[RMDB]
RNA sequence: GGGAACGACUCGAGUAGAGUCGAAAAGCGCAGAUGCUGCAAAUCUCUCAUCUUUACGCCGAUUAUGGCGGCAAACCGGCACUGGAAGAUAUCAACCUGACGCUGGAAAGCGGCGAGCUACUGGUGGUCGCAGAUCAAGAUUCGUCUUGAUCUGCGAAAAAGAAACAACAACAACAAC
Reactivity to DMS in 0.01 (KOAc 150mM, MgCl2 10mM, bicine 150mM(pH8.5), 24C), signal-to-noise 2, nucleotides 027 to 126: g020c080g000c040a120g000a120u000g010c060u010g030c070a050a120a060u020c050u000c010u000c080a100u000c050u000u000u000a080c060g000c010c010g020a130u000u000a130u010g020g010c030g000g020c160a020a080a100c060c040g000g010c010a080c040u000g000g000a080a140g000a090u000a090u000c100a040a110c090c010u000g010a120c070g000c030u000g000g000a020a070a070g000c000g000g000c070g010a100g010c000u000a050c070u000g010g040u000g010g000
Reactivity to 2A3 in 0.01 (KOAc 150mM, MgCl2 10mM, bicine 150mM(pH8.5), 24C), signal-to-noise 2, nucleotides 027 to 126: g060c020g030c090a030g100a260u210g060c070u080g000c020a060a180a130u040c080u010c030u020c070a050u020c070u040u190u060a010c020g020c020c000g040a130u090u090a150u300g040g000c060g020g030c000a050a060a080c020c020g030g030c100a030c060u030g010g050a070a020g070a080u170a110u220c040a000a040c000c010u040g060a100c010g000c020u050g040g000a080a090a030g100c050g060g010c020g020a020g040c010u010a040c020u090g030g070u040g030g080
This 177-nucleotide RNA was probed chemically with DMS and 2A3. DMS adducts were read by reverse transcription with MarathonRT. Source: RMDB library OK2TRN, as collected in RNAgym. The reactions ran in a buffer of 150 mM KOAc, 10 mM MgCl2 and 150 mM bicine (pH 8.5), at 24 C.